[RMDB]
This 207-nucleotide RNA was probed chemically with 2A3 and DMS.
For DMS the reverse transcriptase was MarathonRT.
For 2A3 the reverse transcriptase was SuperScript II with manganese.
The RNA was probed in 150 mM KOAc, 10 mM MgCl2 and 150 mM bicine (pH 8.5) at 24 C.
RNA sequence: GGGAACGACUCGAGUAGAGUCGAAAAAGGGAGUACCACCAGCAGCUCGUUGCAUUCGAGUUCACAGGUCAAACGAUAGCGGCCACUUCGGUGGUUGAGAUAUGAUCGGCCUCCAGCUGUCACCUAGCUGGGGAGAUUUGCGGAACCUGCGGAAGGACCUAUACACGUUGUUCGCAACGUGUAUAGGAAAAGAAACAACAACAACAAC
Reactivity to 2A3 in 0.01 (KOAc 150mM, MgCl2 10mM, bicine 150mM(pH8.5), 24C), signal-to-noise 2, nucleotides 027 to 156: a020g170g000g010a040g050u100a050c000c010a010c010c020a030g090c030a000g000c020u010c030g090u160u230g080c060a060u100u060c020g020a010g020u070u060c070a050c020a050g000g070u080c090a050a050a100c110g060a050u060a080g060c040g000g010c000c000a000c020u080u070c170g080g000u010g000g000u000u020g030a040g030a060u070a050u210g110a030u020c020g060g090c010c010u050c000c010a000g000c000u020g080u160c040a060c060c060u050a010g010c000u020g010g000g050g000a060g000a010u100u130u170g000c060g000g020a020a080c010c000u040g050c040g050g010a050a040g050g020a010
Reactivity to DMS in 0.01 (KOAc 150mM, MgCl2 10mM, bicine 150mM(pH8.5), 24C), signal-to-noise 1, nucleotides 027 to 156: a080g040g000g020a160g030u000a120c020c040a130c060c000a110g030c080a070g020c010u020c070g000u020u010g040c050a180u000u020c040g010a150g020u010u000c000a090c000a080g030g020u000c010a020a080a070c000g000a100u000a120g010c010g000g000c020c010a020c010u010u000c300g080g010u000g020g000u000u000g000a160g020a080u000a080u000g000a000u000c020g020g000c060c000u010c010c000a050g020c020u000g040u000c130a190c110c090u000a030g000c000u000g020g000g040g000a100g040a040u000u020u000g000c040g010g000a020a080c020c020u000g070c050g020g010a090a100g010g000a170